[RMDB]
RNA sequence: GGGAACGACUCGAGUAGAGUCGAAAAGAGACUGCUGGACUCGCCGCCCAAGCCCGAGCAUGGGCCCCAGUUCCGAACGAAGAGACCGCCGGGGAAGGGGGGCGAACCGACGGGAGUUCAAUGGUAAAUGCCAAUGCGUUCGCGCAUUGGAAAAGAAACAACAACAACAAC
Reactivity to DMS in 0.01 (KOAc 150mM, MgCl2 10mM, bicine 150mM(pH8.5), 24C), signal-to-noise 5, nucleotides 027 to 129: g030a130g040a090c030u000g020c100u020g000g000a130c110u010c080g090c060c070g050c050c020c040a080a250g030c050c020c050g000a160g100c140a110u090g070g010g030c000c050c000c100a000g000u000u120c100c070g030a040a040c090g020a140a110g030a100g060a130c050c040g040c040c040g040g010g010g010a020a250g010g000g020g010g000g120c000g090a050a050c000c050g040a040c080g020g030g000a130g040u030u050c090a080a110u030g000g000u000a110a060a170u170g020
Reactivity to 2A3 in 0.01 (KOAc 150mM, MgCl2 10mM, bicine 150mM(pH8.5), 24C), signal-to-noise 5, nucleotides 027 to 129: g070a000g020a020c050u040g030c030u110g040g010a050c000u000c040g040c020c000g200c000c010c000a010a110g040c000c000c010g080a060g050c090a150u260g000g000g000c000c000c000c000a040g030u130u050c040c040g020a060a040c000g020a070a060g060a000g020a080c020c020g000c030c000g010g020g000g000a070a030g030g000g000g010g010g000c000g020a030a010c000c000g030a040c020g000g010g010a020g010u050u060c040a040a020u080g060g040u180a080a080a020u200g030